[RMDB]
RNA sequence: GGGAACGACUCGAGUAGAGUCGAAAAGAUAUGGAGCGGGGAAAGACAUGGAGCCGAGUACUAUGAAGGCUUUCGGAAACGAAAGCUGGAGUACGAAGUCUCCAACAGCUUUCCCCGCUCCUAAGUCCGGAUUAACGUAGUUCGCUACGUUAAUCCGAAAAGAAACAACAACAACAAC
Reactivity to DMS in 0.01 (KOAc 150mM, MgCl2 10mM, bicine 150mM(pH8.5), 24C), signal-to-noise 1, nucleotides 027 to 126: g000a090u020a300u040g030g000a010g060c020g000g000g000g010a010a000a000g030a020c160a300u020g000g000a010g000c030c020g000a300g010u000a040c040u000a280u040g000a300a280g000g020c000u000u000u000c000g010g000a170a120a240c000g000a010a000a000g030c020u000g010g000a050g030u000a020c000g000a070a080g000u000c000u010c000c000a040a050c300a180g000c000u000u000u000c000c000c020c000g000c010u000c000c000u010a010a060g020u000c000
Overview:
The record gives the reactivity of an RNA of 177 nucleotides to DMS. The DMS profile rests on 860 reads. Conditions: 150 mM KOAc, 10 mM MgCl2 and 150 mM bicine (pH 8.5), 24 C.